[RMDB]
RNA sequence: GGGAACGACUCGAGUAGAGUCGAAAAUGUGACCGCGUACUUUUUGUAGAACGGGCCAACGAGUUACGUUAAGUAGCAAGGUUAAGCACUUAAGGUGCGGAGCCGUAGCGAAAGCGAGUUUUAACUGAGCGUUCAGUUACUUGACGUAGACCCGAAACCACUAGCUGAGUUUCGACUCAGCUAGUGGAAAAGAAACAACAACAACAAC
Reactivity to 2A3 in 0.01 (KOAc 150mM, MgCl2 10mM, bicine 150mM(pH8.5), 24C), signal-to-noise 2, nucleotides 027 to 156: u120g040u070g020a070c010c030g080c020g070u110a120c010u090u230u250u260u160g060u150a030g020a120a000c030g000g000g010c000c000a070a020c080g060a020g120u030u010a000c000g020u000u000a000a000g000u000a000g000c060a100a080g000g000u000u040a000a000g000c000a000c000u140u280a130a080g230g000u000g000c010g000g000a010g000c000c000g020u010a000g030c030g020a040a000a000g020c010g010a060g020u010u050u030u100a180a080c060u110g000a050g040c040g010u110u200c050a010g000u010u010a000c000u000u000g050a030c010g000u000a000g010a060c050c000c000g000a000a030a050